RNA sequence: GGGAACGACUCGAGUAGAGUCGAAAAAAAAUGGCUGUGAGGAACUACUGUCUUCACGCAGAAAGCGUCUAGCCAUGCCGUUAGUAUGAGUGUCGUGCAGCCUCCAGCCUCGAAAAACCGUCAGAAACAUGCAUACAUGGUUCGCCAUGUAUGCAUGAAAAGAAACAACAACAACAAC
Reactivity to DMS in 0.01 (KOAc 150mM, MgCl2 10mM, bicine 150mM(pH8.5), 24C), signal-to-noise 4, nucleotides 027 to 126: a050a070a080a050u000g000g000c010u000g010u010g020a010g000g000a060a020c020u010a300c030u000g000u000c000u000u000c010a010c020g010c030a010g000a130a120a290g000c000g000u000c020u000a070g020c210c280a090u020g010c040c020g000u010u000a070g000u000a040u000g000a020g000u000g000u000c020g000u010g020c000a010g000c010c010u000c010c010a010g000c010c000u000c130g000a070a040a050a050a070c020c060g000u010c070a120g000a110a110a110
Reactivity to 2A3 in 0.01 (KOAc 150mM, MgCl2 10mM, bicine 150mM(pH8.5), 24C), signal-to-noise 2, nucleotides 027 to 126: a000a000a000a030u080g000g000c060u070g100u230g120a010g040g010a070a020c090u200a020c000u300g000u010c000u000u000c000a000c000g000c000a000g000a000a010a000g010c000g000u000c030u010a020g070c040c030a040u090g000c020c000g030u020u000a010g000u010a010u000g010a010g020u000g030u020c010g090u220g090c000a000g010c000c010u000c000c000a000g000c000c000u020c020g000a060a010a000a020a010c020c040g110u130c050a010g190a040a110a020
About this RNA
Chemical mapping of a 177-nucleotide RNA with DMS and 2A3. The RNA was probed in 150 mM KOAc, 10 mM MgCl2 and 150 mM bicine (pH 8.5) at 24 C. 2A3 adducts were read by reverse transcription with SuperScript II with manganese.